[RMDB]
RNA sequence: GGGAACGACUCGAGUAGAGUCGAAAACUGAGAGAGUUCGCUCUCUCAGAAAGAAAGCCGUCCCCGACGGCAGUGAAUGAACACAAAUCGGCGAAAAUAAAAAAACCCGGUGGUUCGCCACCGGGAAGUAUAUAUGUAGGUUCGCCUACAUAUAUACAAAAGAAACAACAACAACAAC
Reactivity to DMS in 0.01 (KOAc 150mM, MgCl2 10mM, bicine 150mM(pH8.5), 24C), signal-to-noise 1, nucleotides 027 to 126: c000u030g000a000g000a030g010a000g010u000u040c200g030c000u000c000u000c010u000c000a000g000a010a060a140g000a130a140a060g010c010c000g020u000c020c040c010c060g010a070c050g010g010c020a050g010u010g040a130a090u020g020a090a110c040a040c080a050a050a040u000c030g010g030c140g000a230a140a110a070u050a030a000a150a200a080a220a150c020c000c000g080g020u000g000g010u000u020c100g010c000c000a010c020c000g000g020g000a000a000
Reactivity to 2A3 in 0.01 (KOAc 150mM, MgCl2 10mM, bicine 150mM(pH8.5), 24C), signal-to-noise 2, nucleotides 027 to 126: c000u000g010a010g000a000g000a010g000u030u150c130g110c040u000c000u000c000u000c000a000g010a000a020a010g030a040a080a020g010c000c000g030u050c060c050c010c010g020a010c000g000g000c040a000g000u010g030a110a230u140g070a210a010c020a000c010a010a060a090u050c000g030g020c050g020a060a050a080a110u190a030a120a100a040a020a140a210c000c000c000g010g000u010g010g050u050u050c190g010c090c000a000c010c000g000g010g000a000a000

Record summary: The data come from the RNA Mapping Database (RMDB), library M2PK50. Structure probing data (DMS and 2A3) for a 177-nucleotide construct. For DMS the reverse transcriptase was MarathonRT. Reactivities are given for positions 27 through 126.